The data come from the RNA Mapping Database (RMDB), library OK2TST. Structure probing data (DMS and 2A3) for a 177-nucleotide construct. Reactivities are rounded to 0.1 and cut off at 0 and 3. The 2A3 profile rests on 558 reads. The reactions ran in a buffer of 150 mM KOAc, 10 mM MgCl2 and 150 mM bicine (pH 8.5), at 24 C.

[RMDB]
RNA sequence: GGGAACGACUCGAGUAGAGUCGAAAAACGCUAUGACAACUGGCGAGUUUGAAUUUAACGAAUAUAAUUUGGCAGAUGAUAAUUUAAGAAAUCAUAUCAACCAAAACGGUGAUUUUUUCUAUAUUAAGCACUCUCAAUAAUUCGUUAUUGAGAGUGCAAAAGAAACAACAACAACAAC
Reactivity to DMS in 0.01 (KOAc 150mM, MgCl2 10mM, bicine 150mM(pH8.5), 24C), signal-to-noise 1, nucleotides 027 to 126: a060c020g000c000u000a020u020g000a080c140a040a110c130u000g000g000c010g040a090g020u050u000u000g000a030a020u000u020u020a090a030c060g010a070a160u000a090u020a050a060u020u010u000g000g020c100a070g010a020u010g030a020u000a040a080u010u020u010a100a120g010a050a060a020u000c000a000u000a060u000c050a090a080c040c000a000a030a030a100c120g010g010u000g010a000u000u000u000u000u000u000c000u010a060u010a150u020u000a080a150
Reactivity to 2A3 in 0.01 (KOAc 150mM, MgCl2 10mM, bicine 150mM(pH8.5), 24C), signal-to-noise 1, nucleotides 027 to 126: a010c010g000c030u060a040u210g050a070c000a090a030c000u050g040g020c000g020a020g030u090u170u080g020a040a060u050u130u100a040a010c020g000a050a030u120a030u000a190a200u020u000u000g020g030c000a050g000a190u050g020a000u010a090a210u210u250u160a110a020g000a030a100a000u000c000a020u000a000u190c100a150a130c000c000a060a060a060a060c110g110g010u030g010a030u000u000u000u000u000u210c080u070a020u090a050u300u110a050a000